[RMDB]
RNA sequence: GGGAACGACUCGAGUAGAGUCGAAAAACACUACGAUCACACUAGGACGAGGUACUCUCGAUCGAUCCUAGUACUACAUGGUACCUCUAGUAGGUACGACUAUGGAUCCAGUACUACUCUCAUGAUCUGGGAUGUUAUCUUUCGAGAUAACAUCCCAAAAAGAAACAACAACAACAAC
Reactivity to 2A3 in 0.01 (KOAc 150mM, MgCl2 10mM, bicine 150mM(pH8.5), 24C), signal-to-noise 1, nucleotides 027 to 126: a000c040a000c030u120a050c120g030a040u030c040a030c000a010c120u060a080g100g020a010c010g000a020g060g030u070a070c050u050c040u030c140g130a090u100c010g030a030u000c020c010u000a000g020u010a030c030u020a000c030a070u160g060g000u010a010c020c000u040c010u050a160g080u120a000g030g000u010a000c000g010a010c000u000a010u160g030g010a020u000c000c030a010g070u000a010c000u020a020c000u040c000u070c020a070u000g070a050u000c050
Reactivity to DMS in 0.01 (KOAc 150mM, MgCl2 10mM, bicine 150mM(pH8.5), 24C), signal-to-noise 3, nucleotides 027 to 126: a060c100a100c090u000a080c160g020a100u000c040a130c210a050c080u010a030g010g000a050c010g000a080g000g000u010a090c060u010c120u020c070g000a110u010c150g000a150u000c000c010u000a010g010u010a090c160u000a130c190a070u020g010g000u000a010c000c000u020c020u010a120g000u010a010g000g010u000a010c000g000a060c080u020a030u020g000g000a020u000c020c060a040g000u000a060c040u000a130c130u010c020u010c070a090u010g010a060u010c060
Structure probing data (2A3 and DMS) for a 177-nucleotide construct. 2A3 adducts were read by reverse transcription with SuperScript II with manganese. DMS adducts were read by reverse transcription with MarathonRT. For 2A3, 1,417 sequencing reads were counted. Conditions: 150 mM KOAc, 10 mM MgCl2 and 150 mM bicine (pH 8.5), 24 C.